[RMDB]
RNA sequence: GGGAACGACUCGAGUAGAGUCGAAAAUGAAAUGGGUAUAUAAAAAAACCAAAUAACGUAUGUUUAGGAGCCUUUAUAUGGAUUUAUUUCACAACGUCUUUCUAACUUAUUCUUGCUGAACUUAUGAUGAGACUUUCCUAUUCGUAGGAAAGUCUCAAAAAGAAACAACAACAACAAC
Reactivity to DMS in 0.01 (KOAc 150mM, MgCl2 10mM, bicine 150mM(pH8.5), 24C), signal-to-noise 1, nucleotides 027 to 126: u010g010a020a020a010u010g000g000g000u000a040u000a120u000a000a000a000a050a050a300a190c000c000a100a040a130u200a040a060c060g050u020a040u050g010u000u000u000a110g000g000a140g000c300c080u000u040u000a000u000a030u000g000g000a040u000u020u020a060u000u000u000c010a010c180a040a040c100g000u000c080u000u000u000c050u000a080a110c100u000u000a020u010u000c020u000u010g000c030u030g020a020a120c030u020u030a100u000g000a260
Reactivity to 2A3 in 0.01 (KOAc 150mM, MgCl2 10mM, bicine 150mM(pH8.5), 24C), signal-to-noise 2, nucleotides 027 to 126: u160g020a040a000a010u030g000g050g000u040a060u040a000u130a040a080a000a090a030a030a060c020c010a040a170a040u140a050a000c060g110u070a020u300g020u000u030u110a060g000g010a020g050c040c030u050u050u030a160u020a110u120g020g000a030u050u130u030a010u000u160u050c000a010c020a130a020c000g130u020c020u000u090u030c020u040a060a160c000u000u120a030u300u010c080u030u110g000c010u000g080a100a140c010u020u090a020u210g070a010